RNA sequence: GGGAACGACUCGAGUAGAGUCGAAAACUGUCGUUUCGACGACAGCGUCCAUCCUAAGUCUACUAAGACAGCGGAGGCAAGCCCAAUGUCGGAAACGACAUCGGGUGAUGACCCUCCGUCGAGUAGAUAUGGAAGCACUCCGUCCUUCGGGACGGAACUUAUAAUCUGUUUUCGAACAGAUUAUAAGAAAAGAAACAACAACAACAAC
Reactivity to DMS in 0.01 (KOAc 150mM, MgCl2 10mM, bicine 150mM(pH8.5), 24C), signal-to-noise 5, nucleotides 027 to 156: c000u000g020u000c000g020u000u010u000c270g030a080c000g020a000c030a000g020c020g000u010c030c020a210u000c020c020u000a130a230g020u000c000u000a020c020u000a150a150g030a150c150a110g010c050g000g000a040g010g010c020a100a300g000c000c010c000a020a000u010g050u000c000g000g010a170a150a290c010g000a020c010a010u000c000g000g000g010u010g010a050u010g000a080c300c000c010u010c000c000g020u000c020g010a050g020u000a000g000a030u000a300u000g000g000a040a120g030c060a050c050u000c000c000g010u000c000c000u000u020c290g060g010g010a010c010g010g010a000a000
Reactivity to 2A3 in 0.01 (KOAc 150mM, MgCl2 10mM, bicine 150mM(pH8.5), 24C), signal-to-noise 9, nucleotides 027 to 156: c000u010g000u000c000g010u010u070u210c300g160a030c000g000a000c010a000g010c010g070u000c020c010a100u050c010c000u070a140a060g020u000c000u000a010c000u060a110a180g090a160c070a040g050c030g000g000a000g000g010c020a030a030g000c010c000c000a010a010u000g000u000c000g030g060a100a070a120c010g000a000c000a000u000c010g000g000g010u030g020a090u160g040a060c020c010c000u000c010c010g060u070c010g010a000g000u000a000g000a000u010a030u090g010g010a050a030g050c020a040c100u020c000c000g010u000c010c000u060u150c240g060g000g000a000c000g000g000a000a000
Chemical mapping of a 207-nucleotide RNA with DMS and 2A3. The data come from the RNA Mapping Database (RMDB), library RNAMAK. Values cover nucleotides 27 to 156. The RNA was probed in 150 mM KOAc, 10 mM MgCl2 and 150 mM bicine (pH 8.5) at 24 C. For 2A3, 22,830 sequencing reads were counted.